[RMDB]
RNA sequence: GGGAACGACUCGAGUAGAGUCGAAAAGUUCGCAUGGUGCACUAUUGUGUUAUUAGUAAUUAAGUAAGCUUACAAUCGAAAAUGUUUAACCAUAAAAGGGUAAAAUGGUGUAAGACAGUCUGAUACUUUACGGCUUCACGUUUCGACGUGAAGCCAAGAGAUGAUAGAGGUUCGCCUCUAUCAUCUCAAAAGAAACAACAACAACAAC
Reactivity to 2A3 in 0.01 (KOAc 150mM, MgCl2 10mM, bicine 150mM(pH8.5), 24C), signal-to-noise 2, nucleotides 027 to 156: g040u060u100c040g040c120a060u120g050g020u060g010c030a010c060u090a090u160u170g020u010g010u030u070a070u030u020a030g050u070a100a150u160u020a060a010g080u020a040a010g030c030u050u080a020c030a050a160u090c050g100a080a010a040a050u030g030u070u090u020a020a010c010c010a010u060a110a180a020a020g030g000g000u020a080a000a000a010u060g010g000u010g010u030a010a020g010a040c030a010g020u030c010u020g030a030u050a220c040u040u060u100a070c120g000g020c000u000u000c010a000c000g010u040u060u110c180g040a020c000g000u000g000a000a000g010c000c000a000a000
Reactivity to DMS in 0.01 (KOAc 150mM, MgCl2 10mM, bicine 150mM(pH8.5), 24C), signal-to-noise 2, nucleotides 027 to 156: g000u000u000c040g030c040a250u000g030g060u010g020c030a080c010u000a120u000u010g010u020g010u000u010a110u000u020a140g020u010a120a110u000u000a060a160g020u010a020a160g030c030u000u000a040c060a050a150u000c030g030a090a070a080a120u000g000u000u010u000a070a060c000c010a060u000a050a060a170a140g010g000g000u000a040a080a060a120u010g010g000u000g030u010a020a120g000a060c030a080g030u000c020u000g000a130u000a010c010u000u010u000a120c140g060g010c000u010u000c010a000c000g010u000u010u000c230g010a060c000g020u000g020a000a030g020c000c000a000a060
Chemical mapping of a 207-nucleotide RNA with 2A3 and DMS. The DMS profile rests on 2,957 reads. The 2A3 profile rests on 1,722 reads. 2A3 adducts were read by reverse transcription with SuperScript II with manganese. DMS adducts were read by reverse transcription with MarathonRT.